[RMDB]
RNA sequence: GGGAACGACUCGAGUAGAGUCGAAAAACACCGUACGCGGUGAGGCGAUUGUUCGUGAAGCUCAGCUGCAUUACACGAUAUGGAAUACGGUUUGUAGUACGGCUAGAACUCCACGGACAAUUACAAAGAUCCGCAGCCCAUUCGUGGGCUGCGGAUCAAAAGAAACAACAACAACAAC
Reactivity to 2A3 in 0.01 (KOAc 150mM, MgCl2 10mM, bicine 150mM(pH8.5), 24C), signal-to-noise 1, nucleotides 027 to 126: a000c030a000c000c030g010u110a070c260g010c030g110g000u070g010a020g040g160c130g010a010u000u000g000u010u000c000g000u040g020a000a000g040c010u000c000a000g000c000u000g000c000a000u000u000a000c020a000c000g090a030u010a060u210g300g120a070a080u130a100c050g070g010u150u170u100g000u010a010g000u000a000c000g000g000c000u010a050g030a000a000c000u010c070c000a000c010g000g000a000c000a000a000u000u000a070c030a000a010a060